[RMDB]
RNA sequence: GGGAACGACUCGAGUAGAGUCGAAAAGGUUCGAGAUUCGUCUCGAACCAAAUAAAAACAGCGGUAAAUAAUUAGCUCCCGUUACCGCUGAACGGGAGCAUAUGGUCACUUGUUUCGACAAGUGAAAUAUCGUAGCUUAGUUCGCUAAGCUACGAUAAAAAGAAACAACAACAACAAC
Reactivity to DMS in 0.01 (KOAc 150mM, MgCl2 10mM, bicine 150mM(pH8.5), 24C), signal-to-noise 1, nucleotides 027 to 126: g010g000u000u000c000g030a020g000a020u000u020c190g020u000c000u010c000g000a000a010c000c000a010a040a070u000a030a060a040a110a120c020a000g000c000g030g000u020a030a060a050u000a040a030u010u010a120g030c010u010c000c000c020g000u000u000a060c090c010g000c000u000g000a040a000c000g020g000g000a010g030c000a040u020a030u000g000g000u000c000a030c000u000u000g030u020u000u030c160g020a050c000a000a010g000u000g000a000a030a120
Reactivity to 2A3 in 0.01 (KOAc 150mM, MgCl2 10mM, bicine 150mM(pH8.5), 24C), signal-to-noise 1, nucleotides 027 to 126: g000g000u000u000c010g000a010g010a020u000u070c140g060u010c090u000c000g000a000a000c000c000a000a000a000u020a000a030a010a000a000c010a000g000c010g190g160u210a040a090a040u090a090a170u100u170a070g000c000u000c010c000c000g000u010u020a090c000c020g000c020u000g000a000a000c020g000g000g000a000g000c010a000u060a030u100g080g010u030c000a000c000u010u000g030u020u100u130c210g080a000c000a000a000g000u000g020a000a040a000